[RMDB]
RNA sequence: GGGAACGACUCGAGUAGAGUCGAAAACUGCGAGAGCAUGACCUCGUACUUCACCAACUCGUACAUGGGGGCGGACAUGCAUCAUGGGCACUACCCGGGCAACGGGGUCACCGACCUGGACGCCCAAAUACCAUGGCCAUUUCGAUGGCCAUGGUAUAAAAGAAACAACAACAACAAC
Reactivity to DMS in 0.01 (KOAc 150mM, MgCl2 10mM, bicine 150mM(pH8.5), 24C), signal-to-noise 2, nucleotides 027 to 126: c220u000g000c040g030a010g010a230g000c030a030u000g000a090c080c010u000c030g020u000a050c200u000u000c060a070c000c050a060a090c190u020c050g020u000a050c170a060u000g020g010g000g000g030c110g000g000a050c050a020u000g030c050a120u000c060a120u000g000g010g020c050a020c090u010a160c100c030c020g010g000g000c050a060a120c040g060g020g000g030u000c170a070c030c020g010a130c040c020u000g000g010a050c190g020c000c010c020a040a030
Reactivity to 2A3 in 0.01 (KOAc 150mM, MgCl2 10mM, bicine 150mM(pH8.5), 24C), signal-to-noise 1, nucleotides 027 to 126: c060u070g020c020g010a040g000a020g010c040a030u030g050a050c010c000u010c010g000u030a030c030u040u070c060a200c120c020a050a070c010u030c080g150u140a070c050a220u160g000g000g050g020g060c080g000g040a020c000a000u060g060c020a010u030c010a050u100g020g020g000c020a000c070u010a040c020c000c000g000g000g000c070a130a040c020g000g020g000g020u080c020a030c100c060g300a300c050c010u000g000g040a000c020g000c000c000c000a020a020
The data come from the RNA Mapping Database (RMDB), library OK2TRN. This 177-nucleotide RNA was probed chemically with DMS and 2A3. 2A3 adducts were read by reverse transcription with SuperScript II with manganese. Values are in units of 0.01, from 0 to 300, in steps of 10. DMS adducts were read by reverse transcription with MarathonRT. Conditions: 150 mM KOAc, 10 mM MgCl2 and 150 mM bicine (pH 8.5), 24 C. The 2A3 profile rests on 1,071 reads.